[RMDB]
RNA sequence: GGGAACGACUCGAGUAGAGUCGAAAAGCGCAGGAACAGUGGAGCGCCUUCCAGCGUCUGGCGCAAACGCUCAUGCAGACGCCAUUUAGCGCCGAGGGCAUUGUCACCAGCGUGUAUACCGAUGCCAGCCUCGGAGGCUGUUCGCAGCCUCCGAGGCAAAAGAAACAACAACAACAAC
Reactivity to 2A3 in 0.01 (KOAc 150mM, MgCl2 10mM, bicine 150mM(pH8.5), 24C), signal-to-noise 1, nucleotides 027 to 126: g000c090g000c120a000g030g190a070a000c020a000g090u090g030g030a180g030c050g010c000c000u190u120c000c050a000g010c000g000u030c020u050g020g010c000g000c230a050a000a100c090g010c070u220c050a030u180g080c000a020g000a050c000g100c000c000a080u080u150u170a020g030c000g010c050c050g010a010g050g050g000c000a000u000u060g080u100c030a030c090c000a050g030c070g000u030g080u000a000u000a090c000c110g030a080u070g050c000c010a070
Conditions: 150 mM KOAc, 10 mM MgCl2 and 150 mM bicine (pH 8.5), 24 C. The record gives the reactivity of an RNA of 177 nucleotides to 2A3. 2A3 adducts were read by reverse transcription with SuperScript II with manganese. It was measured as part of the RMDB library OK1LIB. Values cover nucleotides 27 to 126. For 2A3, 494 sequencing reads were counted.